Overview:
Chemical mapping of a 177-nucleotide RNA with 2A3. The 2A3 profile rests on 319 reads. The reactions ran in a buffer of 150 mM KOAc, 10 mM MgCl2 and 150 mM bicine (pH 8.5), at 24 C.

RNA sequence: GGGAACGACUCGAGUAGAGUCGAAAAAGUAUGUACGCAUACAAUGGCUUCCUGCACAUCUGCCUGUGGCUAGGGUCACUCCGCGCGGGCACUGUGGCUUUUGUCUGCAUCUGCACAACUAGAUGAAAACUGCGUGGGCAUUCGUGCCCACGCAGUUAAAAGAAACAACAACAACAAC
Reactivity to 2A3 in 0.01 (KOAc 150mM, MgCl2 10mM, bicine 150mM(pH8.5), 24C), signal-to-noise 1, nucleotides 027 to 126: a020g020u020a010u070g080u050a000c200g000c030a000u000a000c050a010a300u290g030g030c000u090u000c080c000u090g000c020a000c000a120u100c120u060g070c000c050u000g000u060g110g010c060u170a090g010g030g000u150c070a070c190u000c060c060g000c010g000c010g010g000g000c030a050c000u000g020u000g060g040c030u150u180u040u120g070u000c010u080g060c000a060u010c000u070g050c140a070c010a170a090c050u050a060g010a120u050g030a050a070